[RMDB]
RNA sequence: GGGAACGACUCGAGUAGAGUCGAAAAGCUCAGUGAGUGUCGCCCCGUCGUCUAGUGCUGGUUCUAGGGCUGGGGCGUCAGCAUCCAGGUCUGACGGGACGGGCAGUAUCUCGCCAUCAACGAUAAACAUGUCAUUGAAAUUCGUUUCAAUGACAUGAAAAGAAACAACAACAACAAC
Reactivity to DMS in 0.01 (KOAc 150mM, MgCl2 10mM, bicine 150mM(pH8.5), 24C), signal-to-noise 9, nucleotides 027 to 126: g000c020u000c030a120g020u000g000a060g020u000g010u000c030g010c030c000c000c010g020u000c020g010u010c010u000a030g010u000g010c070u000g010g000u000u000c030u000a060g010g000g010c030u000g020g000g000g010c030g010u000c040a020g010c040a070u010c070c090a070g010g010u000c030u000g010a040c040g010g010g010a040c040g010g010g000c060a080g010u010a080u000c030u000c030g010c030c080a070u010c110a030a060c080g000a100u010a070a070a160
Reactivity to 2A3 in 0.01 (KOAc 150mM, MgCl2 10mM, bicine 150mM(pH8.5), 24C), signal-to-noise 7, nucleotides 027 to 126: g020c010u010c060a040g030u030g090a040g030u040g030u040c010g020c020c000c010c000g010u020c010g030u000c020u020a030g020u030g140c060u080g110g060u150u020c030u070a050g010g080g000c040u070g030g030g000g010c000g000u010c000a000g000c000a030u040c030c040a030g040g090u030c050u080g020a020c020g040g010g000a010c010g020g020g000c010a000g010u040a050u090c030u010c020g020c030c000a090u120c040a040a080c040g090a090u130a120a080a010